[RMDB]
RNA sequence: GGGAACGACUCGAGUAGAGUCGAAAAGGAAGCCACAGCUGGUGGUAUCUGAGUUGACUUGACAGAACACUGUCUUGAAGACAAUGGCUUACUCCAGGAGACCCACAGGUAUGACCUUCUAGGAAGCCUCAAAUUAUUGGUUCGCCAAUAAUUUGAGAAAAGAAACAACAACAACAAC
Reactivity to DMS in 0.01 (KOAc 150mM, MgCl2 10mM, bicine 150mM(pH8.5), 24C), signal-to-noise 6, nucleotides 027 to 126: g010g010a080a300g010c020c010a030c090a180g000c140u010g010g040u010g020g010u000a040u010c010u010g000a170g010u000u000g020a270c030u000u010g010a010c030a030g010a200a130c300a090c050u010g000u000c010u000u000g000a050a300g000a030c040a090a090u010g000g000c040u000u000a060c060u000c020c050a050g020g000a230g010a120c040c010c040a100c140a060g000g000u000a050u000g010a120c090c010u010u000c080u010a090g010g000a090a080g010c130
Reactivity to 2A3 in 0.01 (KOAc 150mM, MgCl2 10mM, bicine 150mM(pH8.5), 24C), signal-to-noise 4, nucleotides 027 to 126: g010g000a070a040g020c030c000a010c030a040g190c130u300g050g030u020g020g020u040a080u030c010u030g020a020g030u010u020g040a030c000u020u010g010a000c010a020g040a210a070c300a080c180u010g000u000c000u020u040g020a030a000g000a000c000a030a080u110g010g000c000u030u030a020c010u000c010c020a010g030g030a010g020a050c000c040c000a020c020a040g040g040u120a080u130g080a090c000c000u090u020c060u090a060g080g090a060a020g020c010
The record gives the reactivity of an RNA of 177 nucleotides to DMS and 2A3. The DMS profile rests on 4,309 reads. It was measured as part of the RMDB library OK2TRN. The 2A3 profile rests on 5,572 reads.